[RMDB]
RNA sequence: GGGAACGACUCGAGUAGAGUCGAAAAAACUUCGGAAGAAGGGGUGCCUGCAGCGAUGCAGGCCGCAGAGAAAUGGCCCAACCGACUGUUUAUCAAAAACACAGCACUCUGCAAAGACGCAAGUCGAAGAUUCAGAAGUUUUCGAACUUCUGAAUCUAAAAGAAACAACAACAACAAC
Reactivity to DMS in 0.01 (KOAc 150mM, MgCl2 10mM, bicine 150mM(pH8.5), 24C), signal-to-noise 4, nucleotides 027 to 126: a050a030c020u000u000c010g010g090a110a100g020a020a010g000g000g000g030u030g030c000c010u000g000c000a010g000c300g010a180u000g010c010a000g010g010c010c080g010c030a010g000a050g000a090a080a080u020g010g010c020c030c030a070a120c120c080g000a130c070u000g000u010u010u010a150u090c180a060a040a040a050a070c120a020c050a040g010c160a140c020u000c010u000g000c020a090a120a080g000a030c020g030c190a080a070g000u000c010g020a150
Reactivity to 2A3 in 0.01 (KOAc 150mM, MgCl2 10mM, bicine 150mM(pH8.5), 24C), signal-to-noise 8, nucleotides 027 to 126: a010a010c040u050u010c040g080g020a090a040g010a030a010g090g020g010g040u130g010c000c000u000g000c000a010g010c010g060a050u030g000c000a000g010g000c000c000g000c000a010g020a000g030a030a150a090u180g060g010c030c010c010a020a050c030c020g100a120c040u020g070u030u060u040a180u160c120a080a100a040a030a010c050a010c010a020g020c020a010c020u010c000u000g000c020a090a040a050g020a000c020g010c070a070a030g010u010c010g030a030